[RMDB]
The data come from the RNA Mapping Database (RMDB), library RSTRND. This 207-nucleotide RNA was probed chemically with DMS and 2A3. For DMS, 1,389 sequencing reads were counted. For 2A3 the reverse transcriptase was SuperScript II with manganese.
RNA sequence: GGGAACGACUCGAGUAGAGUCGAAAAGCCAAGCUCCUACGGGCUGUCAAAGCCUAUGGAGAAGGUUCAGAGACUAAAUGGCAGUGGGCAAGCAUGGCAAUGCUUGCUUAAGAUAUAGUCCGUCCCAGCUGAGAAGCUGCCUAUGAGAGGAAUGCCGGCCAGUUAGUAACUUCGGUUACUAACUGGCAAAAGAAACAACAACAACAAC
Reactivity to DMS in 0.01 (KOAc 150mM, MgCl2 10mM, bicine 150mM(pH8.5), 24C), signal-to-noise 1, nucleotides 027 to 156: g050c010c040a150a300g000c030u000c000c000u000a120c110g020g040g020c000u000g010u000c220a130a080a060g010c000c000u000a020u030g040g030a050g020a030a170g000g000u000u000c000a160g010a300g030a070c030u000a030a130a150u000g010g010c000a060g020u000g000g020g000c030a040a020g020c000a030u000g030g100c190a150a190u000g030c000u000u000g020c010u000u000a010a050g000a170u000a070u010a150g000u000c010c040g000u010c000c000c000a140g070c050u020g020a130g000a170a050g020c010u000g000c000c000u000a090u010g040a300g000a070g000g000a080a090u020g000c060c040g020
Reactivity to 2A3 in 0.01 (KOAc 150mM, MgCl2 10mM, bicine 150mM(pH8.5), 24C), signal-to-noise 2, nucleotides 027 to 156: g040c000c000a030a030g030c010u000c000c000u010a090c130g010g000g000c000u040g180u300c140a110a050a000g000c000c000u060a060u130g000g000a010g010a000a000g000g010u030u050c000a040g140a000g000a080c040u050a190a030a100u040g000g000c000a000g010u000g050g040g000c000a020a000g000c000a000u060g150g000c110a210a140u010g000c000u000u000g000c000u000u000a020a000g020a000u060a020u010a150g000u000c000c000g030u030c000c020c000a000g010c040u080g020a070g010a250a010g010c000u020g000c020c000u040a150u120g120a110g040a070g040g120a240a030u100g050c010c010g020

For 2A3, 1,063 sequencing reads were counted.